[RMDB]
RNA sequence: GGGAACGACUCGAGUAGAGUCGAAAAUGAAGUUCAUAUAUUUGCACGUGCUCGUAGCUCUUUUCUUCCUUUUUGAGACAUAAAAAUAUGGAAUAUCUUGGCACCCGUUACAAGCCGUCUCUAAAAAAUAUCCAUGACGUUUCGACGUCAUGGAUAUAAAAGAAACAACAACAACAAC
Reactivity to DMS in 0.01 (KOAc 150mM, MgCl2 10mM, bicine 150mM(pH8.5), 24C), signal-to-noise 2, nucleotides 027 to 126: u040g000a160a120g000u040u030c020a040u020a090u020a070u040u000u000g000c050a010c080g000u000g000c030u000c110g030u000a050g000c050u000c000u010u000u020u000c010u000u000c070c010u000u000u000u000u000g000a070g040a120c050a120u040a010a090a080a000a060u050a030u030g030g000a150a070u000a040u000c050u000u060g010g020c090a110c030c030c010g000u000u010a060c240a020a100g000c050c020g000u000c000u000c030u030a000a030a050a000a050
Reactivity to 2A3 in 0.01 (KOAc 150mM, MgCl2 10mM, bicine 150mM(pH8.5), 24C), signal-to-noise 4, nucleotides 027 to 126: u140g050a110a020g070u130u160c060a000u090a020u030a090u180u100u120g070c060a010c080g040u070g030c020u020c030g070u060a010g000c000u000c000u040u010u060u050c040u020u040c030c000u030u110u050u030u100g080a050g000a010c040a040u160a130a080a040a040a020u140a120u120g050g020a090a030u070a050u110c030u020u030g000g000c010a030c000c010c020g070u120u100a050c030a090a000g010c020c000g030u000c010u020c020u120a110a060a010a030a000
Conditions: 150 mM KOAc, 10 mM MgCl2 and 150 mM bicine (pH 8.5), 24 C. An RNA of 177 nucleotides, treated with DMS and 2A3 and read out base by base. Reactivities are given for positions 27 through 126. For 2A3, 1,896 sequencing reads were counted.